[RMDB]
RNA sequence: GGGAACGACUCGAGUAGAGUCGAAAACUAUUAAGACAAAUUUACAACAUAACGUCCCAGGCAUCGACUCCCAUUGAUGCCUAGUCCGGCUAUAGCUUACUUGUGCUUGCUAUAGUUAGCUCUCUAGAAGAGUGUAAGGGCAACACGUCUGGAUGCGCCUAUUUAUAUCCUUCGGGAUAUAAAUAGGAAAAGAAACAACAACAACAAC
Reactivity to DMS in 0.01 (KOAc 150mM, MgCl2 10mM, bicine 150mM(pH8.5), 24C), signal-to-noise 2, nucleotides 027 to 156: c080u010a130u010u000a090a100g010a190c020a060a080a170u000u000u010a090c080a070a110c060a130u000a090a060c040g010u000c040c020c050a070g000g010c000a030u000c000g010a070c030u010c040c030c040a300u010u000g000a030u000g010c010c000u000a040g000u000c020c020g010g020c010u000a030u000a000g000c010u000u000a040c020u000u010g010u000g020c020u000u000g010c000u000a020u000a010g010u000u000a040g010c000u010c010u010c030u000a180g030a150a060g000a070g020u000g000u000a050a070g060g000g000c020a050a080c030a020c070g000u000c040u000g010g010a120u000g000c070g010
Reactivity to 2A3 in 0.01 (KOAc 150mM, MgCl2 10mM, bicine 150mM(pH8.5), 24C), signal-to-noise 8, nucleotides 027 to 156: c060u080a090u260u240a130a040g050a030c060a030a170a050u210u290u220a160c100a220a020c050a110u160a150a050c040g030u020c010c010c030a020g000g020c000a000u000c000g030a040c020u030c060c010c000a010u020u070g000a000u000g000c010c000u000a000g010u000c000c010g020g000c000u010a010u010a010g000c010u060u150a080c020u160u240g100u150g190c050u070u040g000c000u010a000u000a010g000u010u010a000g000c000u010c010u020c030u090a160g020a220a010g010a290g010u030g030u080a050a100g010g010g000c000a020a010c050a010c050g040u020c060u050g050g010a020u040g030c030g010
An RNA of 207 nucleotides, treated with DMS and 2A3 and read out base by base. It was measured as part of the RMDB library ARCHII. For DMS, 5,645 sequencing reads were counted.